[RMDB]
RNA sequence: GGGAACGACUCGAGUAGAGUCGAAAACUACCCGGUGGAAACAACUGAAGCUUCAACGCCUUUUUUUCCAAUCUUCUUUAGCACCGGGCUAGGGAGUAAGCCCGUGGAACCUUAGUUUUGUUCCCUCGGGACUUACUUGUGGUUCCUGUGGUGCACUCACCAGUUAAUAGUUCGCUAUUAACUGGUGAAAAGAAACAACAACAACAAC
Reactivity to 2A3 in 0.01 (KOAc 150mM, MgCl2 10mM, bicine 150mM(pH8.5), 24C), signal-to-noise 4, nucleotides 027 to 156: c070u120a100c000c000c000g070g040u020g000g020a050a030a040c030a020a050c100u070g090a200a020g060c020u260u250c130a120a050c120g010c010c030u000u020u020u000u000u030u040c050c010a060a180u050c040u130u010c010u040u190u120a020g000c010a000c010c010g020g000g000c000u070a090g040g090g010a000g000u010a000a000g000c000c000c010g010u020g000g010a010a010c000c020u100u070a150g060u150u300u230u210g020u030u010c000c000c030u050c030g000g000g070a080c000u020u000a010c010u010u030g050u060g060g030u180u300c000c010u100g160u130g020g000u020g000c020a010c020u020
Structure probing data (2A3) for a 207-nucleotide construct. Values cover nucleotides 27 to 156. Conditions: 150 mM KOAc, 10 mM MgCl2 and 150 mM bicine (pH 8.5), 24 C. Reactivities are rounded to 0.1 and cut off at 0 and 3. 2A3 adducts were read by reverse transcription with SuperScript II with manganese. The data come from the RNA Mapping Database (RMDB), library VIROID.